RNA sequence: GGGAACGACUCGAGUAGAGUCGAAAAAAACGAUUCAGAAAUAUACUCCAUGAAAAUAUAAAAGCCAAUGACACCUGUAUAUUCCUUGCUUUCAAGAUAACCAUCACUCAUAGGUUAGUGUCAAUACAUACACACACAAGCACAAUCACAAUCACACCCGUUCCUGUAUGUUCGCAUACAGGAACGGAAAAGAAACAACAACAACAAC
Reactivity to 2A3 in 0.01 (KOAc 150mM, MgCl2 10mM, bicine 150mM(pH8.5), 24C), signal-to-noise 1, nucleotides 027 to 156: a030a000a000c140g030a070u300u240c110a120g040a140a110a000u120a000u030a010c010u010c020c020a000u070g040a040a090a060a030u090a020u050a080a210a000a000g050c040c030a000a030u090g000a010c010a000c070c090u060g030u050a030u010a030u050u120c040c010u080u050g020c000u000u040u230c080a100a070g000a110u010a020a000c010c010a020u160c040a010c090u110c070a180u170a090g020g050u080u040a030g000u030g010u070c030a030a010u070a030c050a000u110a030c030a000c000a000c000a070c030a100a010g040c030a000c010a110a020u000c000a010c000a010a050u000c000a010c010a040c140
This 207-nucleotide RNA was probed chemically with 2A3.
The RNA was probed in 150 mM KOAc, 10 mM MgCl2 and 150 mM bicine (pH 8.5) at 24 C.